[RMDB]
RNA sequence: GGGAACGACUCGAGUAGAGUCGAAAAUGGAGCCCUUUUAGGGGGGAGGCGUCUCGAAUGAGGUACUGCAUGAAAUGGCUCUCCCGCACAUGAGCCUCGUUAUUGCGGGCAGCACGGAGCAAGGCAGCACUCGCAGUAUCUUCGGAUACUGCGAGUGAAAAGAAACAACAACAACAAC
Reactivity to DMS in 0.01 (KOAc 150mM, MgCl2 10mM, bicine 150mM(pH8.5), 24C), signal-to-noise 2, nucleotides 027 to 126: u000g030g010a140g000c070c010c030u010u000u010u010a140g020g010g000g030g010g000a110g000g000c080g000u020c050u000c070g000a130a110u030g000a040g010g030u010a050c080u000g010c050a070u010g000a040a070a130u000g000g030c010u000c020u010c030c020c040g000c090a060c160a120u010g010a120g030c050c030u000c100g000u010u010a130u010u000g010c000g020g000g000c300a050g000c070a050c020g010g000a060g000c060a070a110g000g000c060a070g000